An RNA of 177 nucleotides, treated with 2A3 and DMS and read out base by base.

RNA sequence: GGGAACGACUCGAGUAGAGUCGAAAAGAUAUGGACUGAACUACCGACGUCGCUGCCGUUGAAAUCGGAAACGAUGGAGGCAAAAGUCGUCGGCAGUCCUAAGUCAAAAUCCGAGUUCGCUCGGAAACGUAAGUCCUAGGUUCGCCUAGGACUUACGAAAAGAAACAACAACAACAAC
Reactivity to 2A3 in 0.01 (KOAc 150mM, MgCl2 10mM, bicine 150mM(pH8.5), 24C), signal-to-noise 2, nucleotides 027 to 126: g030a050u090a060u180g010g020a000c020u000g000a090a080c100u170a050c300c000g000a010c010g030u050c000g030c150u030g000c000c000g090u190u120g000a050a040a000u030c010g000g000a110a000a080c000g010a010u010g030g020a000g000g000c010a050a090a060a060g030u030c000g000u000c000g010g000c000a010g000u000c000c000u000a110a030g010u000c000a010a010a050a260u000c010c010g020a010g000u060u120c170g090c090u000c020g020g120a050a030a010
Reactivity to DMS in 0.01 (KOAc 150mM, MgCl2 10mM, bicine 150mM(pH8.5), 24C), signal-to-noise 2, nucleotides 027 to 126: g010a080u010a300u010g000g030a030c010u010g010a000a070c060u020a300c000c000g000a040c000g010u010c010g020c270u000g030c000c000g060u000u020g000a070a140a020u030c000g000g000a050a030a130c000g010a040u010g000g000a120g000g000c000a020a060a080a130g000u000c020g020u000c010g000g010c000a010g030u000c030c000u000a030a070g030u020c030a080a030a070a070u010c010c000g000a010g000u010u020c160g020c000u000c010g010g010a040a050a110

2A3 adducts were read by reverse transcription with SuperScript II with manganese.